[RMDB]
RNA sequence: GGGAACGACUCGAGUAGAGUCGAAAAGAUAUGGAGGAUGUUAGCGCACAGGGUUUGUCGGAAACGAUUAUCCUGUGAACUACGCUAAUUUCCUCCUAAGUCAAACCUUCCUGUUCGCAGGAAGGAAGGUUAUAACGAGGUUCGCCUCGUUAUAACCAAAAGAAACAACAACAACAAC
Reactivity to 2A3 in 0.01 (KOAc 150mM, MgCl2 10mM, bicine 150mM(pH8.5), 24C), signal-to-noise 3, nucleotides 027 to 126: g050a010u080a040u160g000g000a010g010g000a010u010g010u030u010a000g040c020g010c010a000c000a020g060g010g060u150u300u240g080u050c000g000g000a050a050a030c010g000a000u050u000a010u070c020c000u020g000u010g000a020a010c040u140a030c020g000c010u000a000a000u000u010u000c000c000u000c000c000u000a020a010g000u010c010a020a030a070c000c000u010u020c020c000u020g050u050u050c300g010c100a010g000g030a000a010g000g000a010a080
Reactivity to DMS in 0.01 (KOAc 150mM, MgCl2 10mM, bicine 150mM(pH8.5), 24C), signal-to-noise 3, nucleotides 027 to 126: g000a000u000a300u020g010g000a000g000g010a020u000g010u000u010a000g040c010g000c020a000c010a020g000g010g000u000u020u010g020u000c010g000g000a130a080a240c000g000a020u000u000a010u000c000c010u010g030u010g030a020a040c140u010a300c000g000c000u010a010a000u010u000u000c000c000u000c000c010u000a000a070g000u000c040a080a120a190c000c000u000u000c000c000u000g030u000u000c160g030c010a010g020g000a030a010g010g000a010a010